[RMDB]
RNA sequence: GGGAACGACUCGAGUAGAGUCGAAAACGUAUGACUCAAAUGGAUGAAGAAUACGCAGCAACAUAUCAUAAUGGCUGGCGAAAGUUCUUUUAUGAUAAAGAUUACUGGAUUAGUUCUUCUGGUUAUGAUCCGAUACCCAAUUCGUUGGGUAUCGGAUAAAAGAAACAACAACAACAAC
Reactivity to 2A3 in 0.01 (KOAc 150mM, MgCl2 10mM, bicine 150mM(pH8.5), 24C), signal-to-noise 1, nucleotides 027 to 126: c040g070u100a060u180g060a050c020u100c000a000a080a250u100g090g040a050u100g100a090a040g050a030a000u050a060c030g000c140a010g000c000a000a020c000a040u070a020u060c000a010u040a050a000u090g010g040c000u030g170g000c090g140a170a110a000g040u140u180c020u070u110u010u000a040u020g000a000u070a050a220a080g050a030u120u110a040c030u030g080g030a090u040u110a040g040u000u020c000u000u050c040u070g000g040u090u090a090u220g110
Reactivity to DMS in 0.01 (KOAc 150mM, MgCl2 10mM, bicine 150mM(pH8.5), 24C), signal-to-noise 2, nucleotides 027 to 126: c100g000u000a050u000g010a180c070u010c050a070a100a120u000g000g000a100u010g000a030a000g000a070a020u000a080c140g000c020a020g010c030a000a040c060a190u000a020u000c010a010u000a020a010u000g000g000c270u000g030g000c160g030a110a100a070g020u000u010c010u000u000u000u020a020u000g000a020u000a000a090a110g010a280u000u010a010c010u000g010g010a090u000u000a130g010u000u000c010u000u000c010u000g000g030u000u000a050u010g030
Structure probing data (2A3 and DMS) for a 177-nucleotide construct.
DMS adducts were read by reverse transcription with MarathonRT.
It was measured as part of the RMDB library OK2TST.
2A3 adducts were read by reverse transcription with SuperScript II with manganese.